[RMDB]
RNA sequence: GGGAACGACUCGAGUAGAGUCGAAAAGCUAAUCAGGAUAUAUUUUCUCUAAAAUAUCCCAGCCAUGGGAGUCUGACCACCUCUAUCAGGCAUAACUUGCUCUAAGUCCAUCAUAAAUGCUAGAGGCCCUUCUAAGGGAUUUCGAUCCCUUAGAAGGAAAAGAAACAACAACAACAAC
Reactivity to 2A3 in 0.01 (KOAc 150mM, MgCl2 10mM, bicine 150mM(pH8.5), 24C), signal-to-noise 1, nucleotides 027 to 126: g040c020u070a100a000u160c030a090g000g010a000u030a000u010a110u180u140u050u100c040u010c000u050a100a140a070a070u050a040u030c000c030c050a020g030c040c020a080u070g020g000g020a050g000u000c010u000g010a030c000c000a020c000c030u020c000u040a040u020c020a010g050g000c010a010u030a060a050c050u040u100g010c000u020c020u110a030a050g060u050c030c040a030u050c010a000u160a290a150a040u120g040c070u000a020g000a040g050g000c020
Reactivity to DMS in 0.01 (KOAc 150mM, MgCl2 10mM, bicine 150mM(pH8.5), 24C), signal-to-noise 2, nucleotides 027 to 126: g020c040u000a050a060u020c080a110g020g020a090u000a040u000a040u000u000u000u000c060u000c060u020a050a060a120a060u000a060u000c000c000c050a070g030c090c120a070u000g020g000g000a090g000u000c030u000g020a150c060c060a120c110c010u000c010u000a130u000c040a020g010g010c100a060u000a080a070c070u000u010g020c060u020c090u000a040a060g000u000c040c020a070u000c100a040u010a010a100a100u000g000c090u030a020g010a040g000g000c220